Chemical mapping of a 170-nucleotide RNA with DMS and 2A3. For 2A3 the reverse transcriptase was SuperScript II with manganese. Reactivities are given for positions 27 through 129. The 2A3 profile rests on 2,720 reads. The data come from the RNA Mapping Database (RMDB), library 15KLIB.

RNA sequence: GGGAACGACUCGAGUAGAGUCGAAAACCUCAUUAUGGCUUAUGGCAAUUGCACAUUUGGUGCUCCAGAUGAUGCCUCUCGGUUACUUCAUACCGUGCUUGCAAAGGCUGAGUUAUGCUGUUCUGCAAUACUGGUUCCUUCGGGAACCAGAAAAGAAACAACAACAACAAC
Reactivity to DMS in 0.01 (KOAc 150mM, MgCl2 10mM, bicine 150mM(pH8.5), 24C), signal-to-noise 4, nucleotides 027 to 129: c000c030u030c160a000u030u040a080u120g030g010c060u000u030a090u000g020g000c140a090a190u000u000g040c040a060c050a060u000u050u040g070g060u040g020c170u000c020c080a100g030a070u060g010a100u040g030c070c240u080c050u040c040g030g020u020u070a160c170u030u090c160a080u030a110c030c050g030u020g010c210u030u110g020c110a010a020a210g020g040c020u070g050a110g050u070u020a070u050g010c000u000g030u050u010c090u120g020c080a170a020u060a120
Reactivity to 2A3 in 0.01 (KOAc 150mM, MgCl2 10mM, bicine 150mM(pH8.5), 24C), signal-to-noise 3, nucleotides 027 to 129: c000c000u040c040a060u050u130a020u130g040g040c000u060u020a070u120g000g000c010a000a000u150u190g000c000a020c010a060u000u100u270g150g000u040g060c050u010c000c000a000g000a070u040g020a120u050g000c000c000u020c000u030c020g050g000u000u050a140c020u180u190c000a050u060a110c020c010g020u020g000c000u090u000g000c000a020a030a000g010g000c030u040g000a080g110u160u160a060u160g000c010u000g010u010u030c050u000g030c000a000a090u030a050